[RMDB]
RNA sequence: GGGAACGACUCGAGUAGAGUCGAAAAACGCUUCACAAUGUGCGGCAAAGAAACAUUGUUUAUGCAAAGGCACUUCGCAAUGUGUGCUCAAACAUCGCUUAUUCAAACACGCUUCACAAUGUGCGACAAAACUUCACGGUCUUCGGACCGUGAAGAACCGACCUAUCAAGUUCGCUUGAUAGGUCGGAAAAGAAACAACAACAACAAC
Reactivity to 2A3 in 0.01 (KOAc 150mM, MgCl2 10mM, bicine 150mM(pH8.5), 24C), signal-to-noise 4, nucleotides 027 to 156: a000c010g000c030u050u020c000a000c000a000a000u020g000u010g000c010g040g000c080a170a090a020g070a040a080a000c010a020u000u040g070u000u070u060a070u100g040c020a030a040a080g070g000c000a010c010u100u110c130g100c240a100a120u150g020u030g010u010g040c010u010c090a060a090a030c050a080u080c030g000c010u140u110a080u090u150c060a060a050a080c080a030c130g020c020u120u110c050a010c010a130a150u100g030u030g070c020g120a080c030a010a110a030a080c010u000u000c000a000c000g030g000u050c000u010u010c040g090g010a010c000c000g000u000g000a000a000g000a000a000
An RNA of 207 nucleotides, treated with 2A3 and read out base by base. The 2A3 profile rests on 2,082 reads. For 2A3 the reverse transcriptase was SuperScript II with manganese.